[RMDB]
Chemical mapping of a 177-nucleotide RNA with 2A3 and DMS. Conditions: 150 mM KOAc, 10 mM MgCl2 and 150 mM bicine (pH 8.5), 24 C. DMS adducts were read by reverse transcription with MarathonRT.
RNA sequence: GGGAACGACUCGAGUAGAGUCGAAAACUACAUAGUUUCGACUAUGUAGAAACCAUUAGGAAGCAUGCAGAUGCAUAUGGACGAGGGCAACUAAGCUAUUGCGAACAGCAGGUUUCGACCUGCUGAAGAUGAUAGAUGCGUUCGCGCAUCUAUCAUCAAAAGAAACAACAACAACAAC
Reactivity to 2A3 in 0.01 (KOAc 150mM, MgCl2 10mM, bicine 150mM(pH8.5), 24C), signal-to-noise 3, nucleotides 027 to 126: c010u010a010c000a000u000a010g020u010u060u110c220g060a020c010u000a000u000g000u000a000g030a030a010a000c010c010a050u050u110a080g130g060a120a020g010c040a020u110g000c030a030g030a240u080g030c020a020u050a060u150g040g040a030c060g000a050g000g050g000c010a080a020c030u060a040a040g020c020u060a100u110u260g020c040g060a080a020c010a010g000c000a000g000g040u030u030u100c100g070a030c000c000u000g010c000u010g010a010a000
Reactivity to DMS in 0.01 (KOAc 150mM, MgCl2 10mM, bicine 150mM(pH8.5), 24C), signal-to-noise 3, nucleotides 027 to 126: c010u000a000c000a000u000a010g000u000u010u020c120g000a030c000u000a010u000g000u000a010g010a110a110a160c030c020a070u000u000a090g020g020a090a070g000c040a010u010g020c110a100g010a060u010g020c030a070u000a050u000g000g000a120c040g010a070g000g000g000c040a060a090c070u000a080a100g000c060u000a070u000u010g010c060g000a130a190c020a010g000c000a010g000g000u000u010u000c150g000a020c010c000u000g010c000u000g000a030a120

Background
High 2A3 reactivity points to a flexible backbone, as in loops and unpaired stretches. Source: RMDB library M2PK50, as collected in RNAgym.